[RMDB]
RNA sequence: GGGAACGACUCGAGUAGAGUCGAAAAAGCUAUCAGUGUGUUCGGAUGGGAGUGAGUCCAUUCUCGUGCUCACUCAACUCGCUACAGGAUGGGAGUGAGCACUGGAUUGCUCGAUGCGUCGUAGUGGAUCGUUGGAAUUCCAUCCUUCGACUCACUCACAGAAGCAGAAAUUCGUUUCUGCUUCUGUAAAAGAAACAACAACAACAAC
Reactivity to 2A3 in 0.01 (KOAc 150mM, MgCl2 10mM, bicine 150mM(pH8.5), 24C), signal-to-noise 5, nucleotides 027 to 156: a000g150c130u140a100u190c070a100g030u030g010u020g060u150u100c050g010g040a030u060g020g030g030a030g040u120g030a010g050u030c040c030a030u080u040c060u030c050g000u010g010c010u010c010a010c010u000c000a030a110c000u020c040g120c070u210a140c130a130g110g110a090u160g070g050g040a020g000u000g000a000g000c000a000c000u000g000g010a020u020u080g000c010u020c030g050a040u120g060c040g050u040c030g020u060a030g040u020g070g030a050u060c040g020u010u040g030g050a050a080u180u020c020c010a030u020c010c000u020u020c000g000a000c000u000c010a000c010u000c000
Reactivity to DMS in 0.01 (KOAc 150mM, MgCl2 10mM, bicine 150mM(pH8.5), 24C), signal-to-noise 2, nucleotides 027 to 156: a070g000c060u010a100u000c030a080g050u000g010u000g010u000u000c070g010g010a090u010g010g010g000a090g020u010g020a070g000u000c060c060a070u000u000c040u030c260g020u000g000c010u000c000a030c010u000c000a010a030c040u010c010g000c120u010a200c160a200g020g000a090u010g030g000g010a060g010u000g010a030g020c040a040c030u000g000g010a070u000u000g000c030u000c050g000a080u020g010c040g010u010c050g010u000a080g020u000g020g020a010u000c030g010u000u000g030g020a070a170u000u000c130c140a130u000c010c010u000u010c020g010a020c000u000c000a050c010u000c070